[RMDB]
RNA sequence: GGGAACGACUCGAGUAGAGUCGAAAAUUCCAUCCAUGGGAUCGGUGCCGAGUGAGGCUUAUCCCGGGGGGAUUGCCUCGGCCCCCUCCCUAACACGGGAGUCUCGGGCCCCCUCCCAGGAAUGGAGGCAGUAUAUACAGUUCGCUGUAUAUACUGCAAAAGAAACAACAACAACAAC
Reactivity to DMS in 0.01 (KOAc 150mM, MgCl2 10mM, bicine 150mM(pH8.5), 24C), signal-to-noise 2, nucleotides 027 to 126: u010u000c010c000a020u000c000c000a100u000g000g010g000a010u000c160g010g020u000g010c020c010g000a070g010u010g010a050g000g010c030u000u020a030u000c000c000c000g010g030g020g020g030g000a030u000u000g010c020c000u000c030g020g010c050c060c040c130c000u010c000c000c000u010a100a110c250a140c300g000g000g010a050g000u000c030u000c020g000g000g010c030c010c030c040c050u000c000c000c000a010g010g010a040a040u000g000g000a050g010
Reactivity to 2A3 in 0.01 (KOAc 150mM, MgCl2 10mM, bicine 150mM(pH8.5), 24C), signal-to-noise 1, nucleotides 027 to 126: u030u010c000c000a000u000c000c010a170u030g040g000g000a020u020c030g030g020u050g180c020c020g000a040g060u150g030a010g000g040c010u080u110a070u070c000c000c050g040g080g010g000g000g000a040u020u060g010c000c020u020c000g090g070c030c000c000c000c000u000c010c010c000u050a170a030c070a010c100g000g020g000a020g010u020c020u020c010g060g080g030c000c020c000c000c000u000c000c000c000a000g020g000a070a060u010g020g000a020g040
Source: RMDB library 15KREP, as collected in RNAgym. This 177-nucleotide RNA was probed chemically with DMS and 2A3. For 2A3 the reverse transcriptase was SuperScript II with manganese. Values are in units of 0.01, from 0 to 300, in steps of 10. DMS (dimethyl sulfate) methylates the pairing face of unpaired adenines and cytosines.